This 177-nucleotide RNA was probed chemically with DMS and 2A3. For 2A3 the reverse transcriptase was SuperScript II with manganese. It was measured as part of the RMDB library OK1LIB. The DMS profile rests on 1,423 reads. DMS adducts were read by reverse transcription with MarathonRT.
[RMDB]
RNA sequence: GGGAACGACUCGAGUAGAGUCGAAAAAUAAGUCUUUAAAAGGAGCAUGCAAACUCAAGUUAUGUGGAGUUCUAGGACUUAGACUUAUGGAUGGAACAUGGGUCGCGAUGCAAACAUCAAAUGAAACCGGAAAUUAUGUCUUCGGACAUAAUUUCCGAAAAGAAACAACAACAACAAC
Reactivity to DMS in 0.01 (KOAc 150mM, MgCl2 10mM, bicine 150mM(pH8.5), 24C), signal-to-noise 1, nucleotides 027 to 126: a080u000a020a000g000u000c000u020u030u080a050a130a020a090g000g000a120g020c010a060u010g010c090a100a140a130c080u010c120a120a140g000u050u000a030u010g020u020g020g000a070g010u000u000c080u070a040g010g020a050c040u000u000a040g000a050c000u010u040a060u000g000g000a100u000g000g000a060a050c030a040u050g020g000g010u000c040g000c050g030a020u030g000c100a060a050a110c110a020u000c030a060a080a150u010g010a040a070a120c130
Reactivity to 2A3 in 0.01 (KOAc 150mM, MgCl2 10mM, bicine 150mM(pH8.5), 24C), signal-to-noise 4, nucleotides 027 to 126: a000u060a000a000g000u010c000u010u190u160a060a100a030a040g150g010a050g010c020a030u130g050c070a100a000a070c010u050c050a060a240g070u160u120a180u110g180u170g090g020a120g010u060u000c010u070a010g060g040a040c000u000u030a030g000a020c000u010u000a010u080g030g040a050u090g020g040a070a110c020a060u050g000g060g000u020c030g000c050g070a010u070g010c020a020a030a010c030a020u080c080a050a040a100u200g050a130a020a030c040